[RMDB]
RNA sequence: GGGAACGACUCGAGUAGAGUCGAAAAGCUCCGGCGUACCGGCUGGAGUGGUACACCUUUGGGCGGUGAAGGUCCUGGUUAGGCCCGCGAAAGGCGCGUGUUAGGCGGGCCUAUGCGCGCCAAAGAAGCAUCUCGCGAGGUUCGCCUUGCGAGGUGCAAAAGAAACAACAACAACAAC
Reactivity to 2A3 in 0.01 (KOAc 150mM, MgCl2 10mM, bicine 150mM(pH8.5), 24C), signal-to-noise 5, nucleotides 027 to 126: g000c000u000c000c000g000g010c010g010u110a130c040c040g100g000c000u000g000g000a000g000u010g000g010u040a020c020a040c010c000u020u030u030g020g000g010c010g010g020u060g050a060a010g040g010u010c000c000u000g010g000u030u050a030g010g020c000c010c000g010c010g040a090a040a010g040g000c010g000c000g000u060g060u050u040a030g020g020c060g010g040g030c000c000u000a000u000g010c000g000c010g020c000c010a030a050a010g060a050a010
Reactivity to DMS in 0.01 (KOAc 150mM, MgCl2 10mM, bicine 150mM(pH8.5), 24C), signal-to-noise 8, nucleotides 027 to 126: g010c010u000c000c000g000g010c020g020u040a080c300c220g000g020c020u000g000g000a020g010u000g000g000u040a100c120a090c040c010u010u010u010g000g010g000c020g020g010u010g000a100a080g000g000u000c020c020u010g000g010u020u010a070g020g010c010c000c000g000c110g010a070a110a110g010g010c000g010c020g010u000g010u010u020a050g010g010c080g020g020g000c010c010u000a000u010g000c010g000c030g000c000c000a060a070a080g010a150a150
This 177-nucleotide RNA was probed chemically with 2A3 and DMS. For DMS the reverse transcriptase was MarathonRT. Source: RMDB library OK1LIB, as collected in RNAgym. 2A3 adducts were read by reverse transcription with SuperScript II with manganese. For 2A3, 30,766 sequencing reads were counted. Values cover nucleotides 27 to 126. The reactions ran in a buffer of 150 mM KOAc, 10 mM MgCl2 and 150 mM bicine (pH 8.5), at 24 C.